[RMDB]
RNA sequence: GGGAACGACUCGAGUAGAGUCGAAAACUGGAGGCGGCGGGGUUGCCGGAACCGUUAUUCGUCAACGGCGUGCAGCAACACCCCAUCGAAGGGGUCAGCAUGGCCUAUUCGUUCGACGACGCGCAGGCGUAAAGGCCUGAUUCGUCAGGCCUUUACGAAAAGAAACAACAACAACAAC
Reactivity to DMS in 0.01 (KOAc 150mM, MgCl2 10mM, bicine 150mM(pH8.5), 24C), signal-to-noise 5, nucleotides 027 to 126: c020u000g010g010a150g010g020c050g000g020c070g020g020g000g020u000u000g010c010c030g000g010a140a100c050c010g020u010u000a150u010u010c130g000u010c070a040a050c040g020g010c060g000u000g000c120a190g010c070a040a070c190a060c020c000c000c030a060u000c180g010a130a110g010g010g000g020u000c040a140g020c110a070u000g010g010c020c030u000a120u010u000c050g020u010u000c060g010a060c080g010a060c150g000c080g010c060a060g010g010
Reactivity to 2A3 in 0.01 (KOAc 150mM, MgCl2 10mM, bicine 150mM(pH8.5), 24C), signal-to-noise 2, nucleotides 027 to 126: c010u030g050g040a030g000g050c010g000g050c040g000g070g010g010u050u050g050c030c000g030g010a040a010c000c010g030u000u060a110u120u210c120g070u070c040a010a030c050g010g040c030g050u090g020c020a070g030c010a040a050c040a140c060c000c020c010a060u110c060g090a190a080g020g000g000g000u000c010a020g120c060a160u100g100g050c020c010u060a140u060u080c040g020u060u050c030g030a030c010g020a050c010g020c020g000c060a000g090g030

The record gives the reactivity of an RNA of 177 nucleotides to DMS and 2A3. For 2A3 the reverse transcriptase was SuperScript II with manganese. For 2A3, 2,210 sequencing reads were counted. The RNA was probed in 150 mM KOAc, 10 mM MgCl2 and 150 mM bicine (pH 8.5) at 24 C.